[RMDB]
The data come from the RNA Mapping Database (RMDB), library VIROID. An RNA of 207 nucleotides, treated with 2A3 and read out base by base. Reactivities are given for positions 27 through 156.
RNA sequence: GGGAACGACUCGAGUAGAGUCGAAAAAAUCGAGAGAAAACUGGCUCUCCCUUAGCCAUCCGAGUGGACGUUGUCCUCCUUCGGAUGCCCAGGUCGGACCGCGAGGAGGUGGAGAUGCCAUGCCGACCCGAAGAGGAAAGAAGGACGCGAGACGCAAGCUCACUAACUACUUCGGUAGUUAGUGAGCAAAAGAAACAACAACAACAAC
Reactivity to 2A3 in 0.01 (KOAc 150mM, MgCl2 10mM, bicine 150mM(pH8.5), 24C), signal-to-noise 1, nucleotides 027 to 156: a000a000u210c060g010a010g000a020g020a040a140a000a120c140u030g020g000c010u010c000u020c060c000c000u060u050a000g100c040c000a000u000c000c010g000a010g040u050g010g000a010c290g200u120u220g020u060c000c090u010c000c010u090u020c010g060g000a020u020g000c000c060c020a060g000g000u060c020g000g020a040c010c080g060c100g000a020g000g080a010g010g030u100g010g010a030g000a040u220g090c100c010a000u040g020c000c010g010a010c000c000c000g070a060a070g010a030g000g040a110a000a000g000a020a040g000g050a020c030g010c120g020a070g040a000c110g010c260a030a000